About this RNA: Structure probing data (DMS and 2A3) for a 207-nucleotide construct. Conditions: 150 mM KOAc, 10 mM MgCl2 and 150 mM bicine (pH 8.5), 24 C.
RNA sequence: GGGAACGACUCGAGUAGAGUCGAAAAGGGGUCCAAACCUAGCUAAGACAGCGUGUGAACUACAGCUGAAGCCUCCACGGCUGCACACGCAAUGACGGCUGCGUUUGGACGGAGGCACCCAAAGCACGACUUGGAAGUUCGCUUCCAAGUCGUGCAAGUAUUAGCUUACCUUCGGGUAAGCUAAUACAAAAGAAACAACAACAACAAC
Reactivity to DMS in 0.01 (KOAc 150mM, MgCl2 10mM, bicine 150mM(pH8.5), 24C), signal-to-noise 1, nucleotides 027 to 156: g000g000g010g020u010c000c020a020a010a040c000c040u000a040g020c010u000a050a300g020a230c000a040g050c000g000u000g060u020g000a070a090c120u040a300c010a030g000c020u010g020a040a140g000c000c010u000c000c000a300c030g030g000c010u010g040c020a030c020a030c000g000c000a180a090u000g020a060c060g000g020c000u000g000c070g020u000u000u020g000g010a030c030g010g060a030g040g010c010a060c000c000c000a050a090a160g020c020a040c000g040a040c000u030u000g020g000a020a020g020u000u000c300g020c000u000u000c000c000a000a030g050u000c000g000u000g020c010a000a060
Reactivity to 2A3 in 0.01 (KOAc 150mM, MgCl2 10mM, bicine 150mM(pH8.5), 24C), signal-to-noise 3, nucleotides 027 to 156: g070g010g020g000u000c000c020a000a010a010c000c030u060a010g010c010u090a190a090g100a150c070a060g020c030g020u010g000u000g040a110a130c090u140a120c280a020g000c000u000g000a050a000g010c000c000u030c000c000a050c000g010g000c010u040g020c010a000c000a000c020g000c040a050a130u130g080a030c090g000g010c000u010g010c030g020u010u000u000g010g010a000c000g010g000a000g000g000c000a020c000c000c000a040a040a000g010c000a000c000g000a000c010u000u000g000g030a000a010g030u100u140c220g110c170u010u000c000c000a010a000g000u000c000g000u000g000c000a000a000

For DMS the reverse transcriptase was MarathonRT. Reactivities are given for positions 27 through 156. For 2A3, 4,889 sequencing reads were counted.